This 170-nucleotide RNA was probed chemically with DMS and 2A3. For 2A3, 122,968 sequencing reads were counted. Conditions: 150 mM KOAc, 10 mM MgCl2 and 150 mM bicine (pH 8.5), 24 C.
[RMDB]
RNA sequence: GGGAACGACUCGAGUAGAGUCGAAAACCUUCGAGGGGGUUCACACCUCCAACCUGCGGGCCGGCUACUCUUCUUUUCCUUUCCUCGUCAUCCUGGGUCAACCUCUUAAGUUCCUCUUCCUCCUCCUGUACAUACGUGUUCGCACGUAUGAAAAGAAACAACAACAACAAC
Reactivity to DMS in 0.01 (KOAc 150mM, MgCl2 10mM, bicine 150mM(pH8.5), 24C), signal-to-noise 9, nucleotides 027 to 129: c020c020u020u040c120g010a130g010g010g000g030g020u020u010c170a110c150a170c030c010u020c020c010a050a060c110c070u040g020c060g000g000g000c030c040g010g010c060u000a050c080u010c050u030u030c020u020u010u020u020c040c030u010u020u030c000c000u010c050g030u020c060a060u020c040c060u020g010g010g010u010c020a080a110c070c030u030c060u020u030a090a100g000u000u000c020c010u000c050u020u010c010c010u020c020c010u000c020c010u000g030u000a130
Reactivity to 2A3 in 0.01 (KOAc 150mM, MgCl2 10mM, bicine 150mM(pH8.5), 24C), signal-to-noise 9, nucleotides 027 to 129: c000c000u040u070c140g070a150g010g010g000g000g020u120u120c080a060c020a030c090c000u020c000c010a020a030c010c030u090g020c030g010g020g020c010c010g020g010c010u060a060c010u030c000u100u050c010u040u060u020u060c010c000u040u040u030c010c010u020c010g060u020c020a060u040c010c050u050g010g010g010u040c020a070a100c030c010u060c000u060u070a100a030g010u030u010c000c000u010c000u020u010c000c000u010c000c000u020c000c000u030g020u040a030
DMS adducts were read by reverse transcription with MarathonRT. DMS (dimethyl sulfate) methylates the pairing face of unpaired adenines and cytosines.